Notes
Chemical mapping of a 177-nucleotide RNA with DMS and 2A3. Values cover nucleotides 27 to 126. 2A3 adducts were read by reverse transcription with SuperScript II with manganese. The RNA was probed in 150 mM KOAc, 10 mM MgCl2 and 150 mM bicine (pH 8.5) at 24 C. DMS adducts were read by reverse transcription with MarathonRT.
RNA sequence: GGGAACGACUCGAGUAGAGUCGAAAAUUGCCCCAGUUUACCUCCUCUGACUGGCCAUUUGCAGACUGAGGAAUUGGCCUCUGUAGGGACCUGAUUUUUGAGUUACUUUCCGCCCGCUUGCCUCCCUGUAUAGUGUUGUGUUCGCACAACACUAUACAAAAGAAACAACAACAACAAC
Reactivity to DMS in 0.01 (KOAc 150mM, MgCl2 10mM, bicine 150mM(pH8.5), 24C), signal-to-noise 4, nucleotides 027 to 126: u000u020g000c020c010c010c090a050g010u020u000u020a080c070c020u000c010c030u020c020u020g000a060c080u000g010g010c060c070a080u020u010u010g020c060a070g010a130c070u020g000a060g000g000a070a080u010u000g010g000c020c010u010c020u000g000u000a100g020g000g010a080c080c030u010g000a080u000u000u000u000u000g010a090g000u010u000a080c060u010u000u000c030c050g020c030c010c020g020c030u010u010g000c070c040u000c000c030c020u010
Reactivity to 2A3 in 0.01 (KOAc 150mM, MgCl2 10mM, bicine 150mM(pH8.5), 24C), signal-to-noise 9, nucleotides 027 to 126: u110u150g070c000c000c000c000a000g000u050u060u080a100c010c010u030c020c000u030c020u030g070a120c030u030g050g050c040c020a150u070u070u180g040c030a040g030a160c040u090g040a050g040g010a050a050u060u060g030g000c020c000u040c030u050g080u100a080g010g020g030a030c010c010u060g080a160u050u040u030u060u150g130a100g030u050u070a050c010u040u050u010c010c010g020c010c010c000g030c020u010u040g000c010c010u020c000c000c000u000